[RMDB]
RNA sequence: GGGAACGACUCGAGUAGAGUCGAAAAAGGUAGUCCUUCUAUAGUUGAAUUUAAUAGGUUGGCUACCUGUGACUGGACUGAAAGUGGUGAUUACACCCUUGCCAAUACUACAACAGAACCACUCAAAGCGCAGGUAACUUCGGUUACCUGAAAAGAAACAACAACAACAAC
Reactivity to DMS in 0.01 (KOAc 150mM, MgCl2 10mM, bicine 150mM(pH8.5), 24C), signal-to-noise 9, nucleotides 027 to 129: a020g020g020u010a020g020u010c000c000u010u010c020u000a060u010a070g030u000u080g000a190a120u050u040u020a100a040u030a030g020g010u010u030g000g000c030u000a000c020c000u020g020u040g020a080c090u020g040g030a100c080u000g010a070a090a040g000u040g010g000u000g020a150u010u030a130c080a070c010c000c030u010u040g000c070c050a040a060u000a040c040u010a040c000a040a080c070a040g000a060a060c030c020a040c020u020c100a060a080a080g020c220g010
Reactivity to 2A3 in 0.01 (KOAc 150mM, MgCl2 10mM, bicine 150mM(pH8.5), 24C), signal-to-noise 9, nucleotides 027 to 129: a020g000g000u000a000g030u110c010c000u010u010c020u020a070u030a070g140u110u240g170a200a180u190u130u140a120a080u030a030g130g010u020u030g010g000c010u000a000c000c000u010g000u000g010a040c010u030g020g010a010c010u030g060a090a030a010g070u080g030g000u020g010a070u050u110a060c040a040c030c000c000u020u060g020c010c010a040a020u070a110c030u020a020c020a080a010c000a020g030a040a020c010c000a050c020u050c040a080a050a050g080c090g000
This 170-nucleotide RNA was probed chemically with DMS and 2A3. The reactions ran in a buffer of 150 mM KOAc, 10 mM MgCl2 and 150 mM bicine (pH 8.5), at 24 C. Source: RMDB library 15KLIB, as collected in RNAgym. Reactivities are given for positions 27 through 129. For DMS, 75,123 sequencing reads were counted. For DMS the reverse transcriptase was MarathonRT.